This 207-nucleotide RNA was probed chemically with DMS and 2A3.
It was measured as part of the RMDB library OK3TST.
RNA sequence: GGGAACGACUCGAGUAGAGUCGAAAACUGGGUAAACUAAGUGACAGCAAAAUCUAAGUAGUCUGUCUGGAUUUGUACCACUUACUGGAAGAAAUUUUAUUAUUUUUCAGCCAUUCACUGAACUCCCAGGAUUUUGGAGUUGAAUCAUAAAACGGGAGUGUUUAAGUGUAUUCGUACACUUAAACACAAAAGAAACAACAACAACAAC
Reactivity to DMS in 0.01 (KOAc 150mM, MgCl2 10mM, bicine 150mM(pH8.5), 24C), signal-to-noise 1, nucleotides 027 to 156: c000u000g050g000g050u000a030a050a160c080u000a150a120g020u000g020a040c090a080g000c040a050a080a080a120u020c050u010a080a170g000u010a130g020u000c070u010g020u000c040u000g010g000a090u000u010u000g000u000a060c080c030a000c040u010u000a050c020u000g020g030a070a070g000a100a070a110u000u000u020u010a120u010u010a290u010u090u000u030u000c010a030g010c030c040a190u010u020c070a020c020u020g000a040a100c050u010c010c010c010a040g010g010a150u000u000u000u000g020g030a300g050u000u010g000a030a130u000c030a090u010a020a040a030a180c050g000g000g030a190
Reactivity to 2A3 in 0.01 (KOAc 150mM, MgCl2 10mM, bicine 150mM(pH8.5), 24C), signal-to-noise 2, nucleotides 027 to 156: c010u030g000g020g000u110a150a140a050c060u030a070a030g030u020g060a020c000a030g000c000a000a060a060a190u060c070u140a160a070g070u070a020g150u140c150u150g070u030c030u000g010g020a030u050u010u090g020u070a110c000c030a000c040u060u100a000c010u010g010g020a050a000g030a050a090a050u130u080u130u080a210u180u070a150u030u060u000u020u020c010a000g000c000c020a040u050u100c060a030c070u050g030a060a020c030u020c010c000c010a010g050g040a060u110u120u120u090g020g010a000g030u050u080g040a050a010u030c040a040u110a130a060a010a020c070g050g020g000a090
The 2A3 profile rests on 778 reads. Values cover nucleotides 27 to 156.